[RMDB]
RNA sequence: GGGAACGACUCGAGUAGAGUCGAAAAUCCACUAUGAAUCUAGUCACUAAAUAAACACAAUUAGCUACUGUGUGUAAUAGUGAGUCUUGAUAACACAAAAUAAUAGUAUAGUUUUGGAAGAUUAUACGCGCCCUUGCUCCGUUCGCGGAGCAAGGAAGAUCAUGCCCUACUUCGGUAGGGCAUGAUCAAAAGAAACAACAACAACAAC
Reactivity to 2A3 in 0.01 (KOAc 150mM, MgCl2 10mM, bicine 150mM(pH8.5), 24C), signal-to-noise 2, nucleotides 027 to 156: u070c030c030a120c090u290a240u230g130a190a010u030c000u020a000g040u000c000a000c000u010a000a080a000u020a030a020a000c040a010c000a010a180u130u090a050g040c050u170a040c020u030g000u000g000u010g010u010a020a000u000a030g010u040g010a010g080u010c000u010u030g000a010u050a080a030c060a000c090a110a210a050a060u280a000a120u080a190g010u010a010u000a020g010u020u020u130u180g120g030a110a020g000a080u000u000a030u020a030c040g000c020g100c030c000c000u010u010g000c000u000c000c010g040u020u050c050g060c090g140g040a000g000c000a000a000g000g000a000a000
The record gives the reactivity of an RNA of 207 nucleotides to 2A3. Conditions: 150 mM KOAc, 10 mM MgCl2 and 150 mM bicine (pH 8.5), 24 C. Reactivities are rounded to 0.1 and cut off at 0 and 3. It was measured as part of the RMDB library M2RFPK.